[RMDB]
RNA sequence: GGGAACGACUCGAGUAGAGUCGAAAAAUGACGAAGGCUUGAUCAGCUACUGCUGUAAAAUAAUGAAACUAAAAGCGCCGUAUUGUUGAUAAUCUACCCAUGGCAUGUACAGGGAACAGUGUGCUUGACGGUUGUUUAAGUUCGCUUAAACAACCGUAAAAGAAACAACAACAACAAC
Reactivity to 2A3 in 0.01 (KOAc 150mM, MgCl2 10mM, bicine 150mM(pH8.5), 24C), signal-to-noise 2, nucleotides 027 to 126: a000u100g000a080c140g000a100a000g030g000c030u060u020g070a120u140c000a000g000c000u140a300c020u220g000c000u010g020u070a000a060a060a180u130a030a140u080g150a060a150a000c150u100a080a130a030a110g000c000g000c000c060g010u020a050u060u060g050u000u010g000a060u060a080a060u130c050u060a060c090c040c030a070u060g120g000c080a000u140g040u100a020c040a010g090g000g040a030a030c000a060g060u000g000u050g110c000u000u080g050
Reactivity to DMS in 0.01 (KOAc 150mM, MgCl2 10mM, bicine 150mM(pH8.5), 24C), signal-to-noise 2, nucleotides 027 to 126: a070u020g000a040c080g020a130a040g010g010c010u050u010g000a140u020c000a050g000c030u040a080c180u030g030c000u010g030u050a030a060a030a090u030a000a000u020g000a140a110a060c270u060a080a060a060a080g020c070g000c030c050g010u000a070u000u000g020u000u000g010a080u000a080a080u000c020u000a100c040c000c020a070u000g000g000c000a010u000g060u010a060c080a010g000g000g010a050a050c110a060g010u000g000u000g020c020u000u000g000
An RNA of 177 nucleotides, treated with 2A3 and DMS and read out base by base. Reactivities are given for positions 27 through 126. For DMS, 1,919 sequencing reads were counted. It was measured as part of the RMDB library RFM100. 2A3 adducts were read by reverse transcription with SuperScript II with manganese.